[RMDB]
The record gives the reactivity of an RNA of 177 nucleotides to DMS and 2A3. Conditions: 150 mM KOAc, 10 mM MgCl2 and 150 mM bicine (pH 8.5), 24 C. It was measured as part of the RMDB library OK2TST.
RNA sequence: GGGAACGACUCGAGUAGAGUCGAAAAAUAAUUAAAUCAGGAUCUAAUGCAAUCGCUCUUGCUAAUGCCGCACGCCGAGCCAUACCGCCAGACAAUUCCGAUGGCAUUAAAUUGGCGGCACCACGUACUCCUCCUACGUAUUCGUACGUAGGAGGAGAAAAGAAACAACAACAACAAC
Reactivity to DMS in 0.01 (KOAc 150mM, MgCl2 10mM, bicine 150mM(pH8.5), 24C), signal-to-noise 1, nucleotides 027 to 126: a070u000a070a080u070u000a070a090a080u000c040a090g000g020a130u010c050u050a040a060u020g040c040a100a050u010c060g110c050u010c040u010u030g040c040u000a050a060u020g000c030c020g000c050a140c070g000c050c090g000a000g060c020c060a070u000a060c180c040g010c020c030a050g000a080c220a090a060u000u000c010c050g000a040u000g010g030c050a050u010u000a000a100a170u000u010g010g000c010g010g010c060a030c130c050a040c140g020u000a130
Reactivity to 2A3 in 0.01 (KOAc 150mM, MgCl2 10mM, bicine 150mM(pH8.5), 24C), signal-to-noise 1, nucleotides 027 to 126: a030u090a000a050u090u120a090a110a140u130c030a010g020g030a050u030c030u120a060a000u180g010c020a030a060u100c030g020c060u010c020u100u030g070c020u050a070a060u100g030c030c000g000c050a020c020g000c010c030g000a010g020c000c000a020u020a030c000c040g040c020c000a000g040a130c010a010a150u170u000c010c050g140a070u090g090g000c020a010u070u160a130a120a100u050u110g050g010c000g020g020c010a020c000c020a010c020g060u060a050